An RNA of 177 nucleotides, treated with 2A3 and DMS and read out base by base. Reactivities are given for positions 27 through 126. The data come from the RNA Mapping Database (RMDB), libraries RFM100 and RFMREP.

RNA sequence: GGGAACGACUCGAGUAGAGUCGAAAACGGGUCGCUCCCGAGUCAUAGUUAAGGCAAGCUAUGAGUGCAUGUAUUUACAUGUAUUGCAAAUCCACAUAUUCGUUGUGUUUGCACCACAACAAUAUGACGUAAUGGAUCGUUUCGACGAUCCAUUACGAAAAGAAACAACAACAACAAC
Reactivity to 2A3 in 0.01 (KOAc 150mM, MgCl2 10mM, bicine 150mM(pH8.5), 24C), signal-to-noise 7, nucleotides 027 to 126: c000g000g000g000u000c000g000c000u010c010c000c000g000a020g040u010c000a010u010a000g010u010u050a250a050g140g030c070a030a030g000c000u000a000u020g010a020g010u020g010c000a010u000g010u110a210u110u250u280a020c010a000u020g010u030a050u020u080g050c040a070a070a110u020c030c010a020c000a030u020a010u040u060c130g000u000u000g010u000g020u040u060u170g060c070a030c040c000a000c000a000a000c000a010a000u000a010u010g060a050
Reactivity to DMS in 0.01 (KOAc 150mM, MgCl2 10mM, bicine 150mM(pH8.5), 24C), signal-to-noise 3, nucleotides 027 to 126: c000g000g020g000u000c000g000c010u000c000c010c000g010a080g030u000c000a020u000a020g000u000u000a020a040g000g000c150a280a300g000c000u010a000u010g000a020g010u000g000c010a000u000g000u000a130u030u020u050a040c000a020u000g020u000a030u000u050g040c170a070a100a110u020c010c040a300c010a000u000a000u000u000c240g000u000u000g000u000g000u000u000u090g000c300a110c300c000a040c000a000a000c000a010a010u000a000u010g000a200